[RMDB]
RNA sequence: GGGAACGACUCGAGUAGAGUCGAAAACGGCAUAUGCUAUAGCGCGCUAGCCGCGCGCGGCCGGCGCGCGCAUUACGGCCGAUCGAUGCAUGCCGAUGCGCGCCGAUCGCGAUGCGCAUAUAUCGCGCGCUAUUCCCCUCUUCGGAGGGGAAUAGCGAAAAGAAACAACAACAACAAC
Reactivity to 2A3 in 0.01 (KOAc 150mM, MgCl2 10mM, bicine 150mM(pH8.5), 24C), signal-to-noise 1, nucleotides 027 to 126: c020g090g000c030a080u130a000u300g060c030u140a080u110a300g030c000g000c000g030c060u050a010g040c090c000g000c010g020c020g000c040g030g010c000c010g000g000c010g000c000g020c020g040c000a030u080u200a050c010g020g000c020c010g030a000u060c050g140a120u230g090c300a020u160g060c000c000g010a000u050g000c000g010c010g000c040c020g040a020u050c010g010c010g060a150u050g000c040g000c060a010u100a030u030a020u260c050g010c000g000
Reactivity to DMS in 0.01 (KOAc 150mM, MgCl2 10mM, bicine 150mM(pH8.5), 24C), signal-to-noise 1, nucleotides 027 to 126: c070g000g010c070a150u000a050u010g010c020u000a170u020a080g050c000g060c010g000c270u010a110g010c120c100g070c030g030c060g070c020g010g010c090c010g000g020c030g000c020g020c000g100c140a060u000u000a130c020g010g010c030c080g000a050u020c190g000a120u010g020c170a070u020g010c000c010g020a110u030g010c010g010c010g010c000c030g010a040u000c010g010c000g010a030u000g040c030g010c070a090u000a130u030a080u000c180g000c000g010